[RMDB]
RNA sequence: GGGAACGACUCGAGUAGAGUCGAAAAUAUUAUAGCGCACUAAAGACGCUGAUCUUUAGUUACCAAGGAACUUUACUGCUGAGGUCCGAGUUCCAAGGUCCCAUGUCGGACCUUAGCACUAAUUGAACAGUCAUAUUACCUUCGGGUAAUAUGACUGAAAAGAAACAACAACAACAAC
Reactivity to 2A3 in 0.01 (KOAc 150mM, MgCl2 10mM, bicine 150mM(pH8.5), 24C), signal-to-noise 3, nucleotides 027 to 126: u170a050u250u250a150u150a090g060c070g010c060a020c040u020a060a000a010g000a010c010g130c300u120g120a220u050c010u000u010u020a010g000u020u070a080c050c040a050a020g080g020a020a050c020u090u130u200a120c060u180g010c010u000g000a000g010g010u000c000c010g030a010g030u130u000c030c010a000a030g070g010u040c010c000c010a030u040g090u050c000g000g000a000c000c000u000u010a000g000c020a010c050u070a110a150u160u120g100a110a060
Reactivity to DMS in 0.01 (KOAc 150mM, MgCl2 10mM, bicine 150mM(pH8.5), 24C), signal-to-noise 3, nucleotides 027 to 126: u010a090u010u010a110u010a040g000c070g030c180a080c010u000a000a000a020g020a030c020g040c180u010g000a080u000c010u000u000u000a000g000u000u000a080c070c070a090a120g010g010a070a060c040u000u010u010a050c150u010g000c020u000g000a010g010g020u000c020c020g030a020g000u000u000c140c040a080a140g000g000u010c000c000c010a150u010g010u000c020g000g000a020c000c000u000u010a010g000c000a080c160u000a020a060u000u020g010a070a190